[RMDB]
This 207-nucleotide RNA was probed chemically with 2A3 and DMS.

RNA sequence: GGGAACGACUCGAGUAGAGUCGAAAAUGACGUUAACCUGCUGACUCAUACAUACUGACACCGGUUGCUCAACAGGCUGUGUGGGACAAUAGAAUAACAAGGCUGUCAAUUUGAGCUUGACGGCUGCAAAACCUGCAGUACUUCGGUACUGCAGGAACCUACUAGUUCACUUCGGUGAACUAGUAGGAAAAGAAACAACAACAACAAC
Reactivity to 2A3 in 0.01 (KOAc 150mM, MgCl2 10mM, bicine 150mM(pH8.5), 24C), signal-to-noise 4, nucleotides 027 to 156: u090g070a010c090g010u050u020a040a130c000c010u020g010c040u030g060a060c010u020c020a020u040a040c010a020u130a050c030u100g060a060c020a050c100c030g080g020u080u120g030c040u050c040a020a030c010a050g090g000c040u030g010u000g000u020g060g030g020a010c020a050a050u110a110g130a100a090u130a130a040c040a120a010g040g000c010u000g000u010c000a000a000u060u040u140g040a020g030c000u000u000g000a000c000g000g000c000u000g000c020a010a010a030a110c000c000u000g000c000a000g000u000a000c000u010u050c080g090g000u000a000c000u000g000c000a000g000g000a000a000
Reactivity to DMS in 0.01 (KOAc 150mM, MgCl2 10mM, bicine 150mM(pH8.5), 24C), signal-to-noise 1, nucleotides 027 to 156: u020g010a150c080g000u000u000a090a110c070c030u000g060c100u010g030a120c010u000c030a030u000a060c060a040u000a130c100u010g020a100c080a060c010c000g040g000u010u000g000c030u000c040a030a030c000a060g000g000c070u000g040u010g050u000g010g000g050a110c090a040a130u020a120g030a110a140u010a090a080c070a040a150g000g030c030u000g020u000c010a020a050u000u000u000g010a110g030c280u000u010g020a020c050g030g000c000u040g000c090a050a050a060a080c000c000u010g050c010a000g030u010a000c000u000u000c300g040g010u000a000c000u010g010c000a000g000g010a040a020